[RMDB]
RNA sequence: GGGAACGACUCGAGUAGAGUCGAAAACUACCUGAAGUUAACGCAGACAUUGUUGUCGUAGAUGAAGUGUCUAUGUGCACUAACUAUGAUUUGUCUGUGAUUAACCAGCGUAUAUCAUACAAACACAUUGUGUAUGUUGGUGAUCCUCAACAGCUGCUCCUGGUCCAUUUUUCGAAAUGGACCAGGAAAAAGAAACAACAACAACAAC
Reactivity to 2A3 in 0.01 (KOAc 150mM, MgCl2 10mM, bicine 150mM(pH8.5), 24C), signal-to-noise 3, nucleotides 027 to 156: c050u020a000c000c000u020g110a230a030g000u000u000a000a000c000g000c000a000g000a000c010a080u080u140g150u200u180g030u060c000g000u010a030g040a300u080g020a090a030g010u000g010u000c060u150a260u300g120u170g010c010a000c000u010a030a010c000u000a000u030g000a020u030u050u050g000u000c000u000g010u000g030a110u000u000a000a000c000c000a030g040c040g120u030a060u020a040u200c050a040u020a190c040a050a210a000c040a000c090a300u210u150g050u010g000u030a100u080g050u000u090g030g040u040g050a080u080c010c030u140c040a010a070c030a110g130c020u090g060c020
Reactivity to DMS in 0.01 (KOAc 150mM, MgCl2 10mM, bicine 150mM(pH8.5), 24C), signal-to-noise 1, nucleotides 027 to 156: c030u000a300c030c010u020g020a280a100g040u000u000a030a050c120g000c010a060g030a050c020a050u000u010g030u010u000g000u000c020g020u010a060g000a220u000g040a090a130g060u010g080u000c060u000a090u060g000u010g010c020a020c000u000a080a120c010u010a010u000g000a040u000u010u000g030u010c000u020g050u000g000a140u030u000a040a050c010c010a030g000c100g010u020a040u000a150u000c020a090u010a170c050a010a090a110c050a070c110a180u000u010g040u010g060u010a050u020g020u020u010g000g030u000g020a070u000c080c030u020c060a040a030c150a120g010c060u000g040c030